[RMDB]
RNA sequence: GGGAACGACUCGAGUAGAGUCGAAAAGAUAUGGAACUAGACUGCCGAAGAACGCUUUCGGAAACGAAAGCGGGAGGAACUACAGUACUAGUUCCUAAGUCAAAACCCCCAAGUUCGCUUGGGGGAAGCUUUAGCAUUUGUUCGCAAAUGCUAAAGCAAAAGAAACAACAACAACAAC
Reactivity to DMS in 0.01 (KOAc 150mM, MgCl2 10mM, bicine 150mM(pH8.5), 24C), signal-to-noise 2, nucleotides 027 to 126: g010a010u010a180u020g000g000a020a000c000u020a000g000a060c000u000g000c060c020g020a120a090g020a250a240c000g000c010u000u000u010c000g020g000a050a060a120c000g030a010a000a000g000c020g000g000g000a130g000g000a120a010c120u000a200c000a020g010u010a130c000u000a010g000u000u000c000c000u000a000a050g010u000c010a100a040a130a160c000c000c000c000c000a010a010g000u000u050c200g020c010u020u020g010g000g000g040g000a010a010
Reactivity to 2A3 in 0.01 (KOAc 150mM, MgCl2 10mM, bicine 150mM(pH8.5), 24C), signal-to-noise 2, nucleotides 027 to 126: g040a000u040a010u120g000g000a000a020c000u020a000g010a010c010u010g100c150c130g150a230a070g010a050a030c010g020c000u000u000u000c000g040g000a090a020a020c000g010a010a000a000g000c000g020g000g000a010g030g060a110a060c140u200a030c260a000g010u090a300c000u000a030g000u030u000c000c000u000a000a000g000u000c000a010a030a180a300c000c000c000c000c000a000a010g030u050u180c300g040c150u010u010g010g020g010g000g020a000a020